[RMDB]
RNA sequence: GGGAACGACUCGAGUAGAGUCGAAAAACGUCACAUCAAAGAGCCGUGGGACUAUGCUGUUAUUGCGCUUCUUGCACUUGGUUUGCCCUUGCCGCACGACACGGACUCUAGGCUCUGCGAGAGGCUCCACCUGCGGUAAAUUCGUUUACCGCAGGUGAAAAGAAACAACAACAACAAC
Reactivity to 2A3 in 0.01 (KOAc 150mM, MgCl2 10mM, bicine 150mM(pH8.5), 24C), signal-to-noise 2, nucleotides 027 to 126: a000c060g060u070c010a020c020a200u070c030a020a060a060g010a010g020c010c020g000u040g020g000g070a020c040u020a040u230g030c120u030g000u190u130a220u140u100g030c060g020c040u070u000c030u040u220g000c040a040c010u110u180g060g050u180u120u120g050c030c020c020u030u050g130c140c020g050c020a030c030g030a010c010a020c030g060g000a080c010u030c010u040a040g000g000c000u030c010u030g000c020g000a030g010a010g020g050c000u060c030
Reactivity to DMS in 0.01 (KOAc 150mM, MgCl2 10mM, bicine 150mM(pH8.5), 24C), signal-to-noise 3, nucleotides 027 to 126: a080c150g010u000c050a070c090a150u020c060a030a300a030g000a030g020c020c010g030u000g010g020g000a110c060u000a070u000g030c080u000g000u000u000a070u000u000g020c020g010c090u000u010c110u010u020g000c040a040c130u000u020g030g010u020u010u010g020c030c200c230u000u010g010c110c060g030c060a080c140g000a060c050a040c050g000g000a080c010u000c030u010a130g010g000c030u000c020u000g000c300g000a070g010a080g010g000c030u000c040